[RMDB]
RNA sequence: GGGAACGACUCGAGUAGAGUCGAAAAGGCCACUUGCCCAUUUCCCAGGGAGACGCAGUCUUUGACGGCUUUGGACUCAGGUGGCUUCCAGGCCUGUCGACGCUGCCCUGCUGGAGAUGAUCCUUGUGGGGGCAGGGGCAGCCACCCCCAGGCUCAGCUUUUCAGUGAGAUUCGUCUCACUGAAAAGAAAAGAAACAACAACAACAAC
Reactivity to 2A3 in 0.01 (KOAc 150mM, MgCl2 10mM, bicine 150mM(pH8.5), 24C), signal-to-noise 2, nucleotides 027 to 156: g020g000c000c010a170c030u030u080g030c010c000c020a060u090u090u100c020c010c000a000g020g060g000a040g000a030c070g030c130a030g040u040c050u070u100u140g040a030c000g000g000c020u300u090u000g010g020a010c000u020c070a040g000g040u010g030g000c000u000u010c010c010a000g000g020c010c070u180g020u030c040g010a040c060g020c020u020g020c000c010c030u210g040c120u120g070g030a090g040a150u260g030a060u020c040c000u100u100g090u270g090g030g000g010g000c000a010g020g000g000g000c000a000g020c000c010a010c000c020c000c000c010a040g070g030c040u070c120a010g000